[RMDB]
The record gives the reactivity of an RNA of 177 nucleotides to DMS and 2A3.
The RNA was probed in 150 mM KOAc, 10 mM MgCl2 and 150 mM bicine (pH 8.5) at 24 C.
DMS adducts were read by reverse transcription with MarathonRT.

RNA sequence: GGGAACGACUCGAGUAGAGUCGAAAAAAGAAUUAAUCCUAAUUCUUGGGACCCUAUCAGUAUUGCCUCUGCUGUCCACUGUGUUCAGAGUAGUGCAAUAUUGCUAAUAGGGUUUUAGGUUUUAGGUACAAGUUAACAUAUUCGUAUGUUAACUUGUAAAAGAAACAACAACAACAAC
Reactivity to DMS in 0.01 (KOAc 150mM, MgCl2 10mM, bicine 150mM(pH8.5), 24C), signal-to-noise 7, nucleotides 027 to 126: a060a060g000a150a080u020u020a070a070u020c000c000u000a000a000u000u000c000u000u000g000g000g000a010c000c000c000u000a000u000c010a010g010u000a000u000u000g010c000c010u000c000u000g020c010u000g000u000c020c020a280c240u020g020u020g030u010u010c010a010g010a040g000u040a010g020u030g010c010a010a010u000a010u010u000g010c300u010a070a030u000a000g010g000g000u000u000u000u000a020g000g010u000u000u000u000a000g000g010u000
Reactivity to 2A3 in 0.01 (KOAc 150mM, MgCl2 10mM, bicine 150mM(pH8.5), 24C), signal-to-noise 9, nucleotides 027 to 126: a000a010g140a030a030u190u130a060a080u100c000c000u000a000a000u000u000c000u010u000g010g000g010a010c000c000c000u010a010u050c000a000g000u000a000u000u000g000c010c010u080c010u070g240c010u020g060u020c030c010a260c280u230g070u070g030u300u110c020a010g000a030g070u230a010g010u090g080c000a000a000u000a000u000u010g010c030u090a080a070u010a020g000g000g000u000u000u000u000a000g000g000u000u000u000u000a000g000g000u000
About this RNA:
The data come from the RNA Mapping Database (RMDB), libraries RFM100 and RFMREP.